[RMDB]
RNA sequence: GGGAACGACUCGAGUAGAGUCGAAAAGAAAGAAGAAAGGACCUCGGCGAUUUGCUUACGCGAAUAAAUCGUCAGUCUCGAGUGAGGUCCAAAAACGAGACUGAUAAAAAGAAAAAGAAAAAGAAAAACCAUCCAGUACUUUCGAGUACUGGAUGGUAAAAGAAACAACAACAACAAC
Reactivity to 2A3 in 0.01 (KOAc 150mM, MgCl2 10mM, bicine 150mM(pH8.5), 24C), signal-to-noise 1, nucleotides 027 to 126: g050a000a070a010g120a000a030g040a040a150a000g000g000a000c000c000u010c000g000g060c000g070a080u000u000u220g000c120u240u240a010c110g000c000g000a010a010u170a120a090a060u180c030g030u000c020a000g000u000c000u000c000g140a100g000u010g010a000g000g000u000c000c000a060a000a000a180a000c000g000a020g000a000c030u000g010a000u170a090a010a000a000a000g170a000a020a020a050a010g190a070a190a080a000a000g060a020a180a020a000